[RMDB]
RNA sequence: GGGAACGACUCGAGUAGAGUCGAAAAGUGUUUGCAUGACCAGAUUGGGUCUUAAUCAUACUGUUAUGGCAAAUAGCUAAAUGUUGGGUUACCACUUUGAGGUCUGUAUAAACCAAUAAAGGAGCUGUCAUUUCAUGUUUUUGAGCCUCCAAUAAGACAGGGUUUUAGGAUUCGUCCUAAAACCCUGAAAAGAAACAACAACAACAAC
Reactivity to DMS in 0.01 (KOAc 150mM, MgCl2 10mM, bicine 150mM(pH8.5), 24C), signal-to-noise 1, nucleotides 027 to 156: g020u020g010u000u000u000g010c040a150u000g000a090c040c050a180g010a140u000u010g020g010g010u010c000u000u000a090a110u000c030a100u000a070c090u030g020u000u000a050u010g010g000c000a020a030a210u000a080g020c000u000a030a040a130u000g000u030u020g010g000g020u000u010a040c050c050a070c080u020u000u000g000a170g010g040u010c050u000g000u000a090u000a040a020a100c050c010a060a060u000a040a150a080g030g000a080g040c050u030g020u000c030a030u000u000u000c030a080u000g020u000u010u000u000u000g000a080g010c030c000u000c070c020a020a070u000a050a160g010a180
Reactivity to 2A3 in 0.01 (KOAc 150mM, MgCl2 10mM, bicine 150mM(pH8.5), 24C), signal-to-noise 2, nucleotides 027 to 156: g050u040g030u040u040u100g000c040a040u070g020a030c020c030a010g000a230u100u140g020g000g030u060c010u060u040a060a070u040c050a030u070a070c040u040g000u030u050a040u020g020g020c000a010a070a180u060a070g010c030u120a080a120a080u080g070u040u010g010g020g010u030u060a090c020c020a020c110u070u090u050g050a030g030g020u020c000u080g060u030a030u110a090a070a060c000c000a020a020u050a070a120a010g150g000a020g030c050u040g020u040c000a030u010u080u080c010a020u070g100u000u010u030u050u040g000a000g040c020c000u080c060c000a030a010u160a070a100g090a000
An RNA of 207 nucleotides, treated with DMS and 2A3 and read out base by base. The DMS profile rests on 2,551 reads. Source: RMDB library OK3TST, as collected in RNAgym. For 2A3, 784 sequencing reads were counted.